An RNA of 177 nucleotides, treated with DMS and 2A3 and read out base by base. For 2A3 the reverse transcriptase was SuperScript II with manganese. For DMS the reverse transcriptase was MarathonRT. For DMS, 1,854 sequencing reads were counted.

[RMDB]
RNA sequence: GGGAACGACUCGAGUAGAGUCGAAAAGGAAAGCGCGCGAAUUGGAAACGAGGGCGCCAUAUUACGCGCGCAAGGAAUUGGGCCUUGGUUUUUUGGAAGGAUUAGAUAAUUACCCGGCGCCCGUCAAUAUUUCAGAACUUUUCGAAGUUCUGAAAUAAAAAGAAACAACAACAACAAC
Reactivity to DMS in 0.01 (KOAc 150mM, MgCl2 10mM, bicine 150mM(pH8.5), 24C), signal-to-noise 2, nucleotides 027 to 126: g010g000a120a120a150g010c010g040c000g040c000g020a060a090u010u000g000g000a070a050a040c100g000a240g000g010g010c120g030c000c020a030u000a070u000u010a120c020g020c030g010c010g000c000a040a010g000g000a100a070u000u000g040g000g000c010c020u000u000g000g010u000u000u000u010u000u010g010g000a140a110g010g000a130u000u010a070g000a080u010a060a050u000u000a110c030c030c040g010g000c060g010c000c000c010g000u000c050a050a100
Reactivity to 2A3 in 0.01 (KOAc 150mM, MgCl2 10mM, bicine 150mM(pH8.5), 24C), signal-to-noise 1, nucleotides 027 to 126: g070g010a100a000a000g010c000g000c000g030c000g020a070a060u140u130g070g120a140a120a090c040g010a140g000g020g020c030g000c020c010a020u090a060u110u120a090c000g000c000g000c000g000c000a000a010g030g020a040a070u180u110g010g090g000c020c030u050u000g120g120u080u060u070u050u110u060g090g020a030a020g060g030a000u100u000a040g020a070u140a070a060u030u010a030c000c010c020g040g010c020g000c000c010c000g000u000c000a000a060